[RMDB]
RNA sequence: GGGAACGACUCGAGUAGAGUCGAAAACUAUUCAGCUUCGCGUCUCUGAGGCUCGGCGUAACGCGGCUCUUGCCACCAGGUUGCCUCCGCUAGUCGAGCGGACUUGGUCUCUUCCGCCCGAAGCCCUUUUUCUUUCUAAUCAGCUUGUUCCAACGCGCAGGCAUAAAUUCUUCGGAAUUUAUGCCUGAAAAGAAACAACAACAACAAC
Reactivity to 2A3 in 0.01 (KOAc 150mM, MgCl2 10mM, bicine 150mM(pH8.5), 24C), signal-to-noise 2, nucleotides 027 to 156: c030u070a060u230u120c070a010g000c030u090u060c010g010c000g080u030c010u020c050u160g080a030g040g010c030u040c020g050g000c050g030u060a080a020c090g000c040g060g010c010u080c050u140u240g000c050c010a040c010c030a020g070g010u120u100g080c000c020u010c000c000g000c020u070a080g120u130c030g060a010g000c020g020g000a000c000u010u040g000g000u020c000u000c000u130u000c020c030g000c010c070c080g060a070a020g000c000c030c030u040u190u030u030u060c020u090u190u040c020u100a070a120u050c030a040g070c100u090u050g000u090u000c000c000a110a040c000g010c020g000
Structure probing data (2A3) for a 207-nucleotide construct.
The RNA was probed in 150 mM KOAc, 10 mM MgCl2 and 150 mM bicine (pH 8.5) at 24 C.
It was measured as part of the RMDB library VIROID.